RNA sequence: GGGAACGACUCGAGUAGAGUCGAAAAAAAUCACCUCGGUAUGAUUAGGGUGAGACCUAGGAACCGUAGGGGUCUUCUCAAAGGAAGCUUUUGCAGUGACGCCCAUGUAAGUGGGAUAUAACAACAGAUCAGUUUCGCAGUUUCGACUGCGAAACAAGGUCAUACUAAGCUUCGGCUUAGUAUGACCAAAAGAAACAACAACAACAAC
Reactivity to 2A3 in 0.01 (KOAc 150mM, MgCl2 10mM, bicine 150mM(pH8.5), 24C), signal-to-noise 1, nucleotides 027 to 156: a000a000a000u110c040a060c010c010u000c000g020g030u230a050u300g050a260u130u100a050g000g010g010u080g210a070g070a080c000c030u020a000g020g000a030a030c000c010g030u210a040g000g040g010g010u000c010u000u010c000u010c000a070a030a000g070g010a090a010g110c040u070u180u160u040g120c070a030g000u000g050a030c170g050c000c000c000a000u070g030u130a060a160g000u070g010g000g000a010u050a010u010a050a050c070a040a000c000a010g040a190u120c040a010g000u000u010u010c000g000c000a000g000u000u020u150c180g130a070c000u000g000c000g010a000a000a000c000a000a000
The record gives the reactivity of an RNA of 207 nucleotides to 2A3. Values cover nucleotides 27 to 156. The RNA was probed in 150 mM KOAc, 10 mM MgCl2 and 150 mM bicine (pH 8.5) at 24 C. For 2A3 the reverse transcriptase was SuperScript II with manganese.